[RMDB]
RNA sequence: GGGAACGACUCGAGUAGAGUCGAAAAUGCCCAUUGACAGUUGCAGUAAUUGCUGGAGUUGCUGGUGCUCGCAUUCCAGACGUACCUACUACAUUGGCUUGGGUGAACAAUCAGAUAAUUUUCUUUGGCAGGUAGUGCUUCGGCACUACCAAAAGAAACAACAACAACAAC
Reactivity to DMS in 0.01 (KOAc 150mM, MgCl2 10mM, bicine 150mM(pH8.5), 24C), signal-to-noise 5, nucleotides 027 to 129: u100g040c000c070c000a130u000u040g000a060c140a030g040u050u000g030c030a050g040u030a010a010u020u050g010c010u020g020g020a090g050u010u050g000c040u060g090g030u040g050c080u090c150g020c010a000u000u050c010c000a020g000a090c130g020u040a090c170c090u020a050c030u030a090c060a080u010u000g010g030c070u010u040g010g000g080u060g130a100a110c050a110a090u090c110a060g010a110u080a090a060u000u000u000u000c060u150u000u000g030g030c130a080
Reactivity to 2A3 in 0.01 (KOAc 150mM, MgCl2 10mM, bicine 150mM(pH8.5), 24C), signal-to-noise 5, nucleotides 027 to 129: u160g030c010c000c010a010u000u070g060a010c020a020g070u030u050g070c020a010g000u020a050a110u070u070g040c010u000g000g010a090g040u110u080g040c070u100g050g230u160g080c070u070c100g010c000a010u000u030c000c000a010g000a040c020g020u050a050c010c010u000a010c000u000a000c020a040u000u020g010g000c000u010u020g000g010g000u020g000a030a030c040a010a080u150c020a000g050a090u100a060a220u120u080u010u000c010u000u000u010g080g000c050a070
Description: Structure probing data (DMS and 2A3) for a 170-nucleotide construct. Source: RMDB library 15KLIB, as collected in RNAgym. The reactions ran in a buffer of 150 mM KOAc, 10 mM MgCl2 and 150 mM bicine (pH 8.5), at 24 C. For 2A3, 9,870 sequencing reads were counted. For DMS the reverse transcriptase was MarathonRT. For 2A3 the reverse transcriptase was SuperScript II with manganese.